[RMDB]
RNA sequence: GGGAACGACUCGAGUAGAGUCGAAAAUUCGAUCCGGACCGGCUCAUCUCGGCAAGGGGCGGCAGUCCUCAGUGCUCUUACUCUUUCCUAUAAAGAGGAGACUGCUGGACUCGCCGCCCAAGCCCGACAGGUGGUGCGUUCGCGCACCACAAAAGAAACAACAACAACAAC
Reactivity to 2A3 in 0.01 (KOAc 150mM, MgCl2 10mM, bicine 150mM(pH8.5), 24C), signal-to-noise 3, nucleotides 027 to 129: u040u000c020g000a000u030c000c030g010g010a000c000c000g030g010c000u000c070a040u000c030u030c000g000g000c000a010a030g000g000g030g000c000g000g030c010a000g000u000c000c000u000c000a030g000u130g180c000u000c010u040u190a250c020u000c010u050u050u090c050c030u220a240u150a210a060a000g070a010g000g020a010g000a030c000u010g020c010u000g000g000a000c000u000c020g000c000c000g020c010c010c000a000a000g000c000c000c000g030a030c000a050g000
Reactivity to DMS in 0.01 (KOAc 150mM, MgCl2 10mM, bicine 150mM(pH8.5), 24C), signal-to-noise 4, nucleotides 027 to 129: u020u010c080g020a110u030c090c060g010g010a080c050c220g000g050c010u000c030a060u000c050u000c000g030g050c000a160a210g010g030g020g020c030g010g030c020a040g000u010c020c000u010c000a050g010u030g040c060u040c030u060u050a300c040u000c000u010u020u040c290c160u020a060u130a040a010a030g000a020g040g000a030g010a050c010u010g000c140u030g010g000a060c030u000c000g000c030c000g060c020c020c000a000a050g030c090c010c040g020a030c170a050g010
Overview: This 170-nucleotide RNA was probed chemically with 2A3 and DMS. Values cover nucleotides 27 to 129. For 2A3 the reverse transcriptase was SuperScript II with manganese. The 2A3 profile rests on 4,483 reads. It was measured as part of the RMDB library 15KLIB. DMS adducts were read by reverse transcription with MarathonRT.